[RMDB]
An RNA of 177 nucleotides, treated with 2A3 and DMS and read out base by base. The reactions ran in a buffer of 150 mM KOAc, 10 mM MgCl2 and 150 mM bicine (pH 8.5), at 24 C.
RNA sequence: GGGAACGACUCGAGUAGAGUCGAAAACCUGCUGGCCCUGGGCAAUGAGGGACUUAGCACCCGGGCCAGCAGCUGCGGAGGGUGUACUGGGUCCCCCAGCAGUGCCAGCCCACCGGCGCUGCGCUCGAGCGCAUUUGAAAUUCGUUUCAAAUGCGCUAAAAGAAACAACAACAACAAC
Reactivity to 2A3 in 0.01 (KOAc 150mM, MgCl2 10mM, bicine 150mM(pH8.5), 24C), signal-to-noise 1, nucleotides 027 to 126: c000c000u010g010c020u010g010g010c000c010c000u030g010g000g020c070a050a030u160g020a140g020g040g030a060c040u070u130a040g000c020a100c000c010c000g000g040g020c000c010a020g000c000a000g000c020u080g020c040g010g130a120g050g040g040u070g020u110a120c050u040g030g030g030u050c020c000c000c030c000a000g020c020a000g010u000g040c010c020a060g010c040c000c030a090c040c020g030g010c000g000c010u000g000c020g000c040u100c060g030
Reactivity to DMS in 0.01 (KOAc 150mM, MgCl2 10mM, bicine 150mM(pH8.5), 24C), signal-to-noise 2, nucleotides 027 to 126: c140c010u010g020c010u000g000g000c010c020c010u020g050g010g010c090a040a100u010g020a130g010g000g010a090c080u000u000a090g000c150a160c000c000c050g000g010g000c010c000a000g010c000a000g000c100u010g010c140g010g010a130g000g010g000u000g020u020a110c120u010g020g000g000u000c010c000c000c030c050a120g000c020a020g030u000g010c030c030a120g000c060c040c060a080c180c090g000g020c000g040c010u000g000c050g010c140u020c160g020
Background:
Values are in units of 0.01, from 0 to 300, in steps of 10. Source: RMDB library OK2TST, as collected in RNAgym.